[RMDB]
RNA sequence: GGGAACGACUCGAGUAGAGUCGAAAAGAUAUGGAGUUGAGGCUCCCAUUUCGUUGAAAUCGGAAACGAUGGAGAAAUGAGCGAGCUCUCAACUCCUAAGUCAAAGGAGUCGCUUCGGCGACUCCAACAUCUUAACUGCGUUCGCGCAGUUAAGAUGAAAAGAAACAACAACAACAAC
Reactivity to DMS in 0.01 (KOAc 150mM, MgCl2 10mM, bicine 150mM(pH8.5), 24C), signal-to-noise 2, nucleotides 027 to 126: g000a060u010a300u010g000g000a010g030u000u010g010a000g010g010c000u000c000c000c000a020u000u000u000c010g010u000u010g010a090a120a030u000c000g000g000a130a080a170c010g000a020u000g000g010a070g010a000a000a020u000g000a120g020c190g010a000g020c010u010c000u000c010a000a000c010u000c000c000u000a000a070g010u010c020a100a140a060g000g010a030g030u000c010g020c000u000u020c150g030g020c010g010a010c000u000c000c000a060a120
Reactivity to 2A3 in 0.01 (KOAc 150mM, MgCl2 10mM, bicine 150mM(pH8.5), 24C), signal-to-noise 1, nucleotides 027 to 126: g050a000u050a050u180g000g010a020g000u020u010g010a010g020g000c000u000c000c010c000a010u000u000u000c050g160u200u010g060a030a020a000u020c000g030g020a040a060a030c010g010a010u020g060g040a030g010a030a030a010u060g020a070g120c300g050a000g000c010u020c010u000c050a000a000c010u000c000c000u000a000a000g000u000c030a130a020a040g020g000a000g000u000c000g000c050u080u140c280g140g000c000g000a000c000u010c000c000a000a010
The data come from the RNA Mapping Database (RMDB), library TTRDEL. The record gives the reactivity of an RNA of 177 nucleotides to DMS and 2A3. Values are in units of 0.01, from 0 to 300, in steps of 10. The RNA was probed in 150 mM KOAc, 10 mM MgCl2 and 150 mM bicine (pH 8.5) at 24 C.